[RMDB]
RNA sequence: GGGAACGACUCGAGUAGAGUCGAAAAGCGCAUAGGUUCGCCUAUGCGCAAAAAGCGUACUACGAGGGAUUGUCAGAUCAGGAUCCCAAAUAGGAUCCGAUCUUGGAUUUAUCCUCCCCACCGUAUCGCAAAAAAGUGUGACGUUCGCGUCACACAACGUUACGAAUUAGUUCGCUAAUUCGUAACGAAAAGAAACAACAACAACAAC
Reactivity to DMS in 0.01 (KOAc 150mM, MgCl2 10mM, bicine 150mM(pH8.5), 24C), signal-to-noise 2, nucleotides 027 to 156: g030c000g010c000a020u000a020g020g000u000u010c300g040c010c020u000a010u000g030c000g140c010a010a000a030a080a070g020c030g020u000a090c060u000a110c090g010a160g000g020g000a050u000u000g000u000c020a040g010a030u000c000a150g100g000a010u000c000c010c010a030a080a130u010a090g000g010a020u000c020c010g000a010u000c000u020u000g020g010a060u000u010u000a040u000c010c000u010c030c020c000c030a190c090c080g000u000a070u000c040g000c000a000a060a080a050a150a090g000u010g020u010g010a040c010g020u000u010c300g020c050g030u000c000a010c010a000c020a010a060
Reactivity to 2A3 in 0.01 (KOAc 150mM, MgCl2 10mM, bicine 150mM(pH8.5), 24C), signal-to-noise 5, nucleotides 027 to 156: g030c010g000c000a000u010a010g020g050u070u080c190g120c020c000u000a000u010g000c000g000c000a020a000a000a000a000g010c010g000u040a030c020u010a010c050g020a040g030g030g000a020u040u060g040u090c020a020g000a010u010c080a120g000g000a010u020c020c010c040a110a180a110u230a050g000g000a000u000c000c000g000a000u010c000u010u040g040g000a010u120u240u200a050u070c000c010u030c040c010c010c010a060c010c010g000u030a030u250c070g000c000a050a040a020a030a030a080g010u010g000u000g010a010c010g010u030u030c270g040c010g120u010c000a000c000a000c000a000a030